[RMDB]
RNA sequence: GGGAACGACUCGAGUAGAGUCGAAAAGUCACUCAUCCUCACCUGAACAUGACCAACCAGACGUGGAGGGAGCGAUACGGCCAUCUCCUCUCUGCGCCUGGUCCUACCUCCGCUCCCAUCCAGCCUGCCGAGAUUAGUAAUUCGUUACUAAUCUCGGAAAAGAAACAACAACAACAAC
Reactivity to 2A3 in 0.01 (KOAc 150mM, MgCl2 10mM, bicine 150mM(pH8.5), 24C), signal-to-noise 5, nucleotides 027 to 126: g020u030c020a020c070u030c020a080u050c010c000u030c020a060c010c030u030g040a060a020c030a100u120g050a070c040c020a030a010c000c010a010g020a030c030g040u030g010g010a010g000g010g010a020g000c050g060a060u100a250c080g090g010c060c010a060u040c020u020c010c010u110c010u000c000u030g010c010g010c010c000u010g010g000u000c010c000u020a030c000c000u020c020c020g010c020u010c010c010c000a010u020c020c010a020g070c010c010u060g020
Reactivity to DMS in 0.01 (KOAc 150mM, MgCl2 10mM, bicine 150mM(pH8.5), 24C), signal-to-noise 6, nucleotides 027 to 126: g010u000c050a070c080u000c030a080u000c020c010u000c040a090c070c030u000g010a080a080c130a080u000g000a100c060c100a130a080c050c010a020g010a030c040g020u000g010g010a040g000g000g000a020g010c300g000a100u020a070c130g000g000c040c050a140u000c020u000c010c010u010c030u000c010u000g010c030g010c010c010u000g010g000u000c050c020u010a100c050c010u010c030c040g010c040u010c010c000c010a100u000c040c040a080g000c030c050u000g010